[RMDB]
RNA sequence: GGGAACGACUCGAGUAGAGUCGAAAACUUGCUGUUGGAUCAAGCUUUCAGCGUCAGGACAUGCGCCAGCAGAUCGCUUUGCCCAACGGCAUUCAAUGCCGCGAUCUCCUUUACACGCGCGCGAUCGGACGAUUAAUGCGUUCGCGCAUUAAUCGUCAAAAGAAACAACAACAACAAC
Reactivity to 2A3 in 0.01 (KOAc 150mM, MgCl2 10mM, bicine 150mM(pH8.5), 24C), signal-to-noise 6, nucleotides 027 to 126: c020u010u040g000c000u000g010u000u000g030g000a050u140c040a010a050g010c000u010u020u030c020a040g010c010g140u150c120a160g020g050a090c060a170u240g040c200g000c060c020a040g040c030a040g030a010u020c000g010c020u060u050u110g010c010c000c000a000a020c000g000g000c010a000u070u090c050a040a110u110g020c030c000g010c000g040a100u040c030u080c070c070u060u200u230a090c100a020c070g050c000g020c020g010c020g080a080u130c080g080
Reactivity to DMS in 0.01 (KOAc 150mM, MgCl2 10mM, bicine 150mM(pH8.5), 24C), signal-to-noise 2, nucleotides 027 to 126: c090u000u000g010c010u000g000u000u030g000g060a140u000c200a020a080g000c040u010u010u000c000a130g040c030g000u010c220a180g000g000a040c010a110u000g000c130g030c020c110a200g000c050a050g000a000u000c060g000c000u010u000u000g030c240c000c000a060a080c050g000g000c000a000u020u030c140a080a140u000g010c020c040g060c030g010a070u000c060u010c090c020u000u020u080a060c260a160c130g000c020g000c060g020c020g000a040u050c050g000